[RMDB]
RNA sequence: GGGAACGACUCGAGUAGAGUCGAAAACGCAUGGUGCGCGAUGCGGUCGAUAUUCCGCUGAUUGCCUACGACAUCCCGGUCUGCGUCCAUGCCAAGCUUACACGCCAGACCGUGGUAACGCUUGCCAGCUGACCGGACUAUUCGUAGUCCGGUCAGCAAAAGAAACAACAACAACAAC
Reactivity to 2A3 in 0.01 (KOAc 150mM, MgCl2 10mM, bicine 150mM(pH8.5), 24C), signal-to-noise 1, nucleotides 027 to 126: c040g030c030a030u040g000g010u250g060c040g000c020g040a040u090g080c000g000g040u040c050g040a030u040a130u190u010c030c000g000c000u020g060a210u060u150g060c020c020u090a010c040g050a020c010a050u070c000c000c000g040g010u000c020u040g000c010g040u000c010c020a000u000g000c030c000a050a010g020c000u000u020a040c060a000c080g060c090c080a110g030a160c000c000g030u080g080g000u050a020a000c110g010c000u000u020g000c000c020a020
Reactivity to DMS in 0.01 (KOAc 150mM, MgCl2 10mM, bicine 150mM(pH8.5), 24C), signal-to-noise 2, nucleotides 027 to 126: c130g020c010a020u000g000g020u000g010c040g050c040g010a020u000g000c020g040g030u000c220g030a130u010a130u000u000c060c080g000c010u000g000a120u010u000g020c090c070u030a060c100g000a060c080a090u000c020c010c010g000g010u010c010u000g050c000g000u000c020c020a030u000g010c020c050a030a020g000c030u000u000a080c050a030c030g000c080c060a180g000a100c240c030g020u000g000g020u010a040a110c150g000c010u000u000g000c020c000a270